[RMDB]
RNA sequence: GGGAACGACUCGAGUAGAGUCGAAAAGCGACUACCAAUUUCUGGCUGAAAUACCCACACAUGGAACCUGAUUGCAUACCUCAGUACACUGAAGAGUGUUAUGAUAAUGGUUCAUUCGUGCGUUGGACUCAGGGAUUACGUUCGCGUAAUCCCUGAGAAAAGAAACAACAACAACAAC
Reactivity to 2A3 in 0.01 (KOAc 150mM, MgCl2 10mM, bicine 150mM(pH8.5), 24C), signal-to-noise 1, nucleotides 027 to 126: g040c010g030a060c100u150a060c030c040a020a010u060u150u120c040u110g110g040c060u090g010a010a000a110u200a090c020c000c000a030c000a000c000a040u180g100g010a010a000c000c000u010g030a030u040u300g080c010a010u020a010c010c000u040c020a040g150u100a020c160a080c170u220g110a130a040g000a060g030u000g070u220u050a020u010g010a000u000a040a030u120g040g000u000u000c000a010u030u030c030g020u030g010c030g000u020u070g000g050a080
Reactivity to DMS in 0.01 (KOAc 150mM, MgCl2 10mM, bicine 150mM(pH8.5), 24C), signal-to-noise 2, nucleotides 027 to 126: g010c020g000a090c100u000a160c030c040a080a120u000u010u000c080u000g010g020c060u000g000a110a110a100u000a130c030c010c000a070c040a020c050a040u010g030g000a020a020c000c010u000g000a230u000u000g000c010a020u000a020c010c010u000c020a070g010u020a100c180a080c240u020g020a090a110g000a050g000u000g020u000u020a000u000g000a030u000a210a220u000g000g000u000u010c030a150u000u000c040g030u000g040c060g010u000u000g010g000a240
The record gives the reactivity of an RNA of 177 nucleotides to 2A3 and DMS. It was measured as part of the RMDB library OK2TST. For DMS, 1,323 sequencing reads were counted.